[RMDB]
RNA sequence: GGGAACGACUCGAGUAGAGUCGAAAAGUCGGUAGUCGCGAUCCGUUGCAGCCCUUGCGCGGUGUGGCCGGCGCCUCCGCUACCGUCGCCGAUGCCAGUCCGCCGCCUUUCGUGAGGGUGGCGAGCCGACUUCCGAACAAUUCGUUGUUCGGAAGUCAAAAGAAACAACAACAACAAC
Reactivity to 2A3 in 0.01 (KOAc 150mM, MgCl2 10mM, bicine 150mM(pH8.5), 24C), signal-to-noise 2, nucleotides 027 to 126: g020u020c010g030g020u070a080g110u170c040g020c040g090a070u050c030c030g050u130u300g020c010a030g030c000c050c000u130u080g030c000g000c020g000g010u060g010u070g060g010c020c020g030g000c080g030c010c010u090c030c030g030c060u060a050c020c010g040u050c020g000c010c010g010a040u130g080c030c010a030g050u050c010c010g000c020c000g000c020c030u080u190u200c170g110u170g150a070g000g020g010u010g040g020c010g000a010g000c010c020
Reactivity to DMS in 0.01 (KOAc 150mM, MgCl2 10mM, bicine 150mM(pH8.5), 24C), signal-to-noise 2, nucleotides 027 to 126: g010u010c010g000g000u000a000g010u020c050g050c060g000a060u000c020c050g020u010u020g030c070a120g000c070c060c020u000u000g010c140g000c050g000g010u000g000u010g000g020c000c060g020g000c080g010c040c020u000c070c040g010c030u010a040c080c060g010u000c020g020c040c040g010a120u010g000c050c060a060g010u010c060c040g000c000c010g010c010c040u000u000u010c190g000u010g010a090g000g020g000u010g010g030c000g000a020g010c060c140

Structure probing data (2A3 and DMS) for a 177-nucleotide construct.
2A3 adducts were read by reverse transcription with SuperScript II with manganese.
It was measured as part of the RMDB library OK2TRN.
Conditions: 150 mM KOAc, 10 mM MgCl2 and 150 mM bicine (pH 8.5), 24 C.
In probing experiments dimethyl sulfate is read out at A N1 and C N3, which are open when not base-paired.